[RMDB]
RNA sequence: GGGAACGACUCGAGUAGAGUCGAAAAUCAUUGAAUCUGUGUUUUAGAGAAACUUGAGCAUUUCUGCAAUGUGGUUUCAGAAGCAGACCUUGUCCUCUUGAGCCUCAGUUUCCCCACUUCUCUAGGGCGAUCCCGUUAUCUUCGGAUAACGGGAUCGAAAAGAAACAACAACAACAAC
Reactivity to DMS in 0.01 (KOAc 150mM, MgCl2 10mM, bicine 150mM(pH8.5), 24C), signal-to-noise 1, nucleotides 027 to 126: u070c040a090u020u040g020a150a050u000c060u090g000u030g010u000u000u000u000a110g000a280g000a120a000a100c010u000u010g080a090g000c020a020u000u000u040c120u060g000c190a000a070u000g000u000g000g070u000u040u000c030a060g000a180a170g000c020a040g000a040c190c040u000u000g000u000c000c040u010c010u000u020g000a090g080c130c010u040c010a010g000u090u010u000c000c000c000c020a020c010u020u000c050u000c000u000a060g010g000g000
Reactivity to 2A3 in 0.01 (KOAc 150mM, MgCl2 10mM, bicine 150mM(pH8.5), 24C), signal-to-noise 4, nucleotides 027 to 126: u080c020a030u010u230g050a090a100u020c010u030g000u000g050u040u010u100u120a100g050a000g020a020a090a020c010u050u090g040a090g030c020a060u080u100u030c130u140g050c070a040a080u100g060u130g100g110u070u080u060c030a030g080a100a020g020c030a000g020a050c000c000u090u080g020u050c000c000u000c000u010u050g060a020g010c000c070u090c030a050g010u030u010u000c000c000c000c000a010c000u080u050c020u010c030u100a040g030g000g010